[RMDB]
RNA sequence: GGGAACGACUCGAGUAGAGUCGAAAAGAUCGUAAUGCCCUUGGAGCAGGGAAGAAAAUAAUUUAGAAAGGAGAUUCCGCCCCAGCUUGCGGUGCGGCCGAAAGGCUGUAAGGCAUCCCGGAGAGGGCGUCGCAUACAAUUUCGAUUGUAUGCGACGAAAAGAAACAACAACAACAAC
Reactivity to DMS in 0.01 (KOAc 150mM, MgCl2 10mM, bicine 150mM(pH8.5), 24C), signal-to-noise 4, nucleotides 027 to 126: g000a070u000c120g020u000a110a080u040g010c020c030c030u000u000g000g010a050g020c060a090g010g000g000a300a100g010a040a050a050a070u020a090a080u010u020u040a140g010a150a090a100g020g000a120g000a190u010u010c020c050g000c050c010c010c040a060g000c100u000u000g000c010g010g030u010g010c020g000g010c010c000g010a140a070a080g010g010c000u030g000u000a030a090g000g000c040a040u000c030c030c040g000g010a100g010a070g000g000g000
Reactivity to 2A3 in 0.01 (KOAc 150mM, MgCl2 10mM, bicine 150mM(pH8.5), 24C), signal-to-noise 4, nucleotides 027 to 126: g040a050u070c040g030u070a070a070u100g040c000c000c000u000u080g040g010a020g020c030a040g040g030g040a020a030g120a070a130a020a040u300a020a090u230u210u120a090g080a060a090a000g060g030a050g010a060u110u030c020c040g020c020c000c000c000a020g030c020u030u040g010c040g100g000u040g010c010g010g000c000c000g090a070a000a000g020g010c000u010g030u010a010a010g100g000c040a030u050c010c010c010g030g010a130g010a010g050g030g000